Structure probing data (DMS and 2A3) for a 177-nucleotide construct. Reactivities are given for positions 27 through 126. Source: RMDB library M2PK90, as collected in RNAgym. In probing experiments dimethyl sulfate is read out at A N1 and C N3, which are open when not base-paired. Conditions: 150 mM KOAc, 10 mM MgCl2 and 150 mM bicine (pH 8.5), 24 C. The 2A3 profile rests on 3,647 reads.
[RMDB]
RNA sequence: GGGAACGACUCGAGUAGAGUCGAAAAGAAAAGAGGGAGGCGUACAGGGAGCAGCCGCGCGAGGGAUGUACGCAGGGAGGAUCGGGACGCCGGAGAUCCGGCCGCCGGGAUCGCGCGGCUGAAAAAACGUAUAUCUUAGGUUCGCCUAAGAUAUACGAAAAGAAACAACAACAACAAC
Reactivity to DMS in 0.01 (KOAc 150mM, MgCl2 10mM, bicine 150mM(pH8.5), 24C), signal-to-noise 2, nucleotides 027 to 126: g010a110a030a060a110g000a250g000g000g000a050g020g030c010g020u010a020c020a180g000g010g020a150g000c020a020g010c010c000g000c010g020c000g000a020g010g010g020a070u010g000u010a040c020g020c010a100g020g010g010a160g000g000a100u000c050g000g000g000a120c180g010c020c030g000g000a230g000a130u010c020c020g000g010c010c180g000c030c040g000g000g000a110u000c000g010c000g010c000g000g010c010u000g000a000a020a030a030a020a030
Reactivity to 2A3 in 0.01 (KOAc 150mM, MgCl2 10mM, bicine 150mM(pH8.5), 24C), signal-to-noise 2, nucleotides 027 to 126: g060a010a080a000a010g080a070g010g020g020a030g100g000c000g010u010a010c010a030g050g010g110a140g160c000a000g000c000c000g000c000g020c010g000a030g020g110g010a020u070g000u020a010c020g000c030a010g060g040g020a150g040g000a130u230c050g010g000g000a020c050g010c020c010g050g000a120g030a110u150c000c000g010g000c010c020g030c020c010g000g030g010a040u030c000g000c000g000c000g010g000c000u000g000a000a000a000a000a000a000